[RMDB]
RNA sequence: GGGAACGACUCGAGUAGAGUCGAAAAUGCAUUUUGGUCAUUUGAAUGGCAUCGGGGUACACAAUUGGGUGCAGUGAUGUCCGGUUGAAGACUUGGUGGUGCGUGGUAUAGAGAUAAUGGUCAAAAAAAGUGCAGCUUAAUUCGUUAAGCUGCACUUAAAAGAAACAACAACAACAAC
Reactivity to DMS in 0.01 (KOAc 150mM, MgCl2 10mM, bicine 150mM(pH8.5), 24C), signal-to-noise 4, nucleotides 027 to 126: u030g010c090a110u000u000u030u010g000g020u020c010a050u000u010u010g030a120a070u060g020g010c020a030u000c050g020g020g010g000u010a070c060a060c120a140a090u040u030g010g020g000u020g000c040a060g020u030g000a060u010g000u010c020c060g000g000u000u010g010a060a090g020a090c050u000u000g020g030u010g020g010u000g010c040g010u000g010g020u010a080u010a090g010a140g010a100u010a020a050u030g020g000u020c030a000a000a040a060a060
Reactivity to 2A3 in 0.01 (KOAc 150mM, MgCl2 10mM, bicine 150mM(pH8.5), 24C), signal-to-noise 2, nucleotides 027 to 126: u050g000c030a020u030u040u120u110g030g000u060c010a020u000u000u110g100a110a100u120g040g000c000a000u020c030g000g000g020g100u160a020c070a010c010a270a240u170u210g070g040g010u090g010c020a010g090u070g100a120u050g060u000c000c030g030g010u030u120g080a080a030g000a060c040u100u120g060g020u100g010g060u030g110c020g020u020g050g000u070a100u040a060g040a000g000a060u030a060a010u070g030g000u000c000a090a000a000a000a000
This 177-nucleotide RNA was probed chemically with DMS and 2A3. For 2A3 the reverse transcriptase was SuperScript II with manganese. For 2A3, 1,721 sequencing reads were counted. For DMS the reverse transcriptase was MarathonRT.